[RMDB]
RNA sequence: GGGAACGACUCGAGUAGAGUCGAAAACGAGAAAAAUUGCUUAUUCCUCUUCUCAAUUCAAGAGUAAAUCUGGACUAUCAGACGGUGCUUAACUUUUUACCUACACACUACUCAGGCAACAUAGUUCAGAGCGAUUUGUGUUCGCACAAAUCGCUCUAAAAGAAACAACAACAACAAC
Reactivity to 2A3 in 0.01 (KOAc 150mM, MgCl2 10mM, bicine 150mM(pH8.5), 24C), signal-to-noise 1, nucleotides 027 to 126: c070g060a030g150a040a090a000a000a000u050u030g050c000u030u060a130u030u000c000c000u000c040u050u000c000u000c000a010a230u230u000c120a120a000g040a050g010u090a020a000a140u070c000u000g000g000a090c170u160a150u200c070a010g010a070c040g030g030u090g000c040u030u140a050a130c070u080u060u050u150u050a060c000c050u120a140c130a000c000a000c130u130a020c020u020c060a040g000g000c000a050a050c000a110u010a040g050u000u000c040

Structure probing data (2A3) for a 177-nucleotide construct.
2A3 adducts were read by reverse transcription with SuperScript II with manganese.
The reactions ran in a buffer of 150 mM KOAc, 10 mM MgCl2 and 150 mM bicine (pH 8.5), at 24 C.